[RMDB]
RNA sequence: GGGAACGACUCGAGUAGAGUCGAAAAAAAAAGGACGACGACGACAGGAACAGCAGCAGCAGCUGACUAACGGACAACAGCAUACGAGAGCAAGGAGGUGGAAGGUAACUAACACAACACAAAAAAAGUUAAAUACAGGGUUCGCCCUGUAUUUAACAAAAGAAACAACAACAACAAC
Reactivity to DMS in 0.01 (KOAc 150mM, MgCl2 10mM, bicine 150mM(pH8.5), 24C), signal-to-noise 1, nucleotides 027 to 126: a010a000a070a070a100g000g000a000c090g100a190c160g000a050c040g000a090c010a040g020g020a090a060c090a000g030c010a040g000c070a080g030c060a070g030c000u000g040a100c060u000a100a120c190g000g000a100c060a060a040c020a040g000c000a040u010a060c060g000a100g000a090g020c060a090a030g000g000a090g040g010u010g000g000a120a020g000g000u000a000a020c100u000a050a050c120a020c060a000a070c060a090c160a020a000a050a070a050a080a170
Record summary
The data come from the RNA Mapping Database (RMDB), library M2PK90. The record gives the reactivity of an RNA of 177 nucleotides to DMS. Conditions: 150 mM KOAc, 10 mM MgCl2 and 150 mM bicine (pH 8.5), 24 C. DMS adducts were read by reverse transcription with MarathonRT.